Structure probing data (DMS and 2A3) for a 177-nucleotide construct.
[RMDB]
RNA sequence: GGGAACGACUCGAGUAGAGUCGAAAAUUUUGAGCUUUCGAGCUCAAAACAACUGGUGUCCCCACCAGGAAAAACAGAUUUACACGAAGUGAAAGAUCGAAAGGGCCACCAUGUUCGCAUGGUGGAACCAUUUCGAACAAUUCGUUGUUCGAAAUGGAAAAGAAACAACAACAACAAC
Reactivity to DMS in 0.01 (KOAc 150mM, MgCl2 10mM, bicine 150mM(pH8.5), 24C), signal-to-noise 5, nucleotides 027 to 126: u000u000u000u000g010a010g010c000u000u000u010c160g020a010g020c000u000c000a000a000a010a070c250a090a130c010u000g000g010u000g000u010c020c010c050c280a300c010c010a020g000g010a050a070a040a080a060c130a120g000a070u000u000u010a250c040a040c030g000a080a080g010u000g000a060a110a150g000a020u000c020g000a040a090a080g000g000g000c000c000a010c000c000a000u000g000u000u020c190g020c010a000u000g000g000u000g010g000a020a060
Reactivity to 2A3 in 0.01 (KOAc 150mM, MgCl2 10mM, bicine 150mM(pH8.5), 24C), signal-to-noise 5, nucleotides 027 to 126: u020u010u000u010g000a010g000c010u070u040u210c260g100a010g000c000u000c000a000a010a010a010c020a030a110c010u010g000g010u010g080u060c010c030c000c000a000c000c000a000g070g070a050a110a010a020a000c050a040g060a050u090u110u160a040c100a020c170g180a300a030g020u040g100a120a090a010g040a050u050c030g030a090a070a030g070g030g010c000c000a000c000c000a000u010g020u030u040c190g000c120a000u010g000g000u000g000g010a000a010
Description: 2A3 is a SHAPE reagent: it acylates the 2'-hydroxyl of flexible nucleotides of all four kinds. For DMS the reverse transcriptase was MarathonRT. Values cover nucleotides 27 to 126.